[RMDB]
Conditions: 150 mM KOAc, 10 mM MgCl2 and 150 mM bicine (pH 8.5), 24 C. The record gives the reactivity of an RNA of 177 nucleotides to 2A3 and DMS. For 2A3, 856 sequencing reads were counted.
RNA sequence: GGGAACGACUCGAGUAGAGUCGAAAAUGAGAGCUACAAUAAUUAUGUACCCUCAUAUGUUAAACCUGAUAGUGUGUCUACCAGCGAUUUAGGUAGUCUCAUUGAUUGUAAUGCGGCUUCAGUUAACGUAGAUCAUAGGGUUCGCCCUAUGAUCUACAAAAGAAACAACAACAACAAC
Reactivity to 2A3 in 0.01 (KOAc 150mM, MgCl2 10mM, bicine 150mM(pH8.5), 24C), signal-to-noise 2, nucleotides 027 to 126: u030g000a030g000a060g050c040u010a010c010a040a090u180a220a080u260u220a060u110g030u040a010c000c000c010u010c000a030u100a050u130g070u040u150a040a050a040c000c000u000g020a030u030a020g060u050g020u010g020u040c020u060a030c080c000a020g030c040g100a050u110u000u030a030g000g000u020a020g010u010c010u000c000a020u040u020g100a120u050u180g080u220a060a020u060g000c030g040g000c020u040u020c070a060g020u020u100a100a000c110
Reactivity to DMS in 0.01 (KOAc 150mM, MgCl2 10mM, bicine 150mM(pH8.5), 24C), signal-to-noise 2, nucleotides 027 to 126: u000g000a020g000a050g020c300u000a000c000a010a140u000a140a090u010u000a130u000g020u010a070c040c020c020u000c010a020u000a050u000g010u000u010a050a110a070c050c030u010g000a030u000a030g010u010g010u000g000u010c010u010a050c020c020a170g010c150g000a130u000u000u000a050g000g000u000a010g000u000c010u000c020a030u000u000g000a070u000u000g020u000a020a060u000g010c170g010g020c020u000u000c050a070g000u020u010a050a100c190